[RMDB]
RNA sequence: GGGAACGACUCGAGUAGAGUCGAAAACUUGAAAGAGUGCGUAAUAGCUCACUGGUCAAGUGAUCCUGCGCCGACAAUGUAGCGGGGCUCAAGUACACCGCCGAAGCCGCGGCAUUCACAUAACACCCUCAUGAUUUACGUUCGCGUAAAUCAUGAGAAAAGAAACAACAACAACAAC
Reactivity to 2A3 in 0.01 (KOAc 150mM, MgCl2 10mM, bicine 150mM(pH8.5), 24C), signal-to-noise 3, nucleotides 027 to 126: c000u000u020g000a000a050a050g090a030g040u050g020c020g020u080a110a200u050a190g040c010u010c030a030c020u100g110g130u030c010a010a000g000u000g010a030u000c020c000u020g020c020g070c000c010g110a160c040a140a140u210g030u100a080g050c000g000g010g020g000c020u030c110a070a030g050u050a050c080a050c060c020g000c010c010g100a060a010g070c090c060g040c010g020g030c000a050u100u200c090a060c000a060u200a130a030c010a040c040c010
Reactivity to DMS in 0.01 (KOAc 150mM, MgCl2 10mM, bicine 150mM(pH8.5), 24C), signal-to-noise 2, nucleotides 027 to 126: c010u000u000g000a040a130a040g010a040g010u000g000c030g020u010a090a130u040a270g000c020u000c030a080c020u000g010g010u000c010a050a050g010u000g000a130u020c040c030u000g030c110g030c030c030g000a080c090a080a020u010g010u000a070g020c020g000g000g010g010c030u020c160a040a140g010u010a060c080a070c080c040g000c000c030g020a070a100g000c050c100g020c040g020g020c020a080u010u010c120a070c100a120u010a070a070c120a140c140c050
This 177-nucleotide RNA was probed chemically with 2A3 and DMS. For DMS the reverse transcriptase was MarathonRT. For 2A3, 2,018 sequencing reads were counted. Values cover nucleotides 27 to 126.